[RMDB]
RNA sequence: GGGAACGACUCGAGUAGAGUCGAAAAUGACUUUAAACUGCUGACUCAUACAUACUGACACCGGUUGCUCAACAGGCUGUGUGGGACAAUAGAAUAACAAGGCUGUCAAUUUGAGCUUGACGGCUGCAAAACCUGCAGUACUUCGGUACUGCAGGAAGGAUAUUCACGGGUUCGCCCGUGAAUAUCCAAAAGAAACAACAACAACAAC
Reactivity to 2A3 in 0.01 (KOAc 150mM, MgCl2 10mM, bicine 150mM(pH8.5), 24C), signal-to-noise 1, nucleotides 027 to 156: u090g030a010c050u110u170u110a060a090a050c080u100g020c050u000g090a090c010u030c030a000u050a000c010a000u130a070c010u020g120a050c010a060c150c000g170g000u130u030g000c000u010c070a020a140c030a060g080g000c060u010g000u060g040u010g090g060g010a020c110a020a020u090a030g150a140a120u110a100a000c050a090a000g020g030c010u020g010u000c000a000a010u040u050u120g030a000g000c000u000u000g000a000c000g060g000c000u020g010c000a000a000a040a260c000c000u000g000c000a000g020u000a000c010u030u010c010g130g000u000a010c000u000g000c000a010g000g000a000a000